[RMDB]
RNA sequence: GGGAACGACUCGAGUAGAGUCGAAAAGAUAUGGAGUAGAGAGCAACAGCCUCCCAGUCGGAAACGACUGGAGGACAUGCUCGAUCUCCUAAGUCAAAAGAGAUAAGACCUUCGGGUCUUAUCUCAAGGUAAAAGAACUGUUCGCAGUUCUUUUACCAAAAGAAACAACAACAACAAC
Reactivity to DMS in 0.01 (KOAc 150mM, MgCl2 10mM, bicine 150mM(pH8.5), 24C), signal-to-noise 4, nucleotides 027 to 126: g000a010u000a270u010g000g010a010g010u000a040g000a300g000a010g010c010a040a080c180a160g000c010c000u000c130c030c040a010g000u000c000g000g000a080a050a100c000g010a010c000u000g000g010a020g000g010a030c090a070u000g000c000u000c000g000a170u010c000u000c000c000u010a030a080g000u010c020a120a080a130a130g010a020g010a020u000a000a010g010a010c010c000u000u020c220g040g010g010u000c000u000u000a000u000c000u000c000a010a030
Reactivity to 2A3 in 0.01 (KOAc 150mM, MgCl2 10mM, bicine 150mM(pH8.5), 24C), signal-to-noise 2, nucleotides 027 to 126: g010a010u020a030u080g000g000a000g020u300a040g080a010g000a000g070c080a040a200c130a300g040c000c010u000c000c070c010a000g000u010c000g000g000a040a020a030c000g000a000c020u000g010g000a000g000g020a020c010a100u110g000c000u000c000g000a030u000c000u000c000c000u010a050a010g020u000c020a030a000a070a200g010a010g000a000u010a000a000g000a000c030c000u060u170c300g080g000g000u020c000u020u000a000u000c000u010c000a000a000

Background:
This 177-nucleotide RNA was probed chemically with DMS and 2A3. Reactivities are given for positions 27 through 126. The reactions ran in a buffer of 150 mM KOAc, 10 mM MgCl2 and 150 mM bicine (pH 8.5), at 24 C.